Conditions: 150 mM KOAc, 10 mM MgCl2 and 150 mM bicine (pH 8.5), 24 C.
This 177-nucleotide RNA was probed chemically with DMS and 2A3.
RNA sequence: GGGAACGACUCGAGUAGAGUCGAAAACAAUCAGUGUGGUAUGACUUCCACAAGACCAAUGAAGGAAGGAAGGUCGGUGUGAUUGUGCCAAACAACAGGAAGGACAUGGCACAGGAAUGUACCAAGGCCAAGUGCCUUUUUUCGAAAAGGCACUUGGAAAAGAAACAACAACAACAAC
Reactivity to DMS in 0.01 (KOAc 150mM, MgCl2 10mM, bicine 150mM(pH8.5), 24C), signal-to-noise 2, nucleotides 027 to 126: c060a060a070u000c100a090g000u030g010u020g000g000u020a050u040g000a160c100u000u000c030c010a100c100a090a140g000a100c050c020a070a090u010g010a140a090g040g010a050a110g020g010a080a050g040g000u000c020g020g050u000g060u010g000a200u000u010g020u000g030c010c090a000a170a010c060a080a020c140a140g000g000a100a040g000g020a110c030a150u000g020g000c020a010c010a040g040g000a080a060u000g030u010a100c020c030a070a160g000g020
Reactivity to 2A3 in 0.01 (KOAc 150mM, MgCl2 10mM, bicine 150mM(pH8.5), 24C), signal-to-noise 2, nucleotides 027 to 126: c010a000a080u080c090a110g140u030g040u000g120g040u080a060u130g050a110c050u050u000c000c000a020c030a080a030g040a040c020c010a000a060u200g060a110a030g090g030a030a050g080g020a070a030g000g030u030c030g030g060u060g020u060g050a120u080u060g000u030g040c010c030a080a230a030c020a030a000c010a020g090g050a050a030g000g030a030c030a080u030g000g000c010a000c000a000g060g060a060a020u080g010u050a040c010c020a010a020g060g000

For DMS the reverse transcriptase was MarathonRT.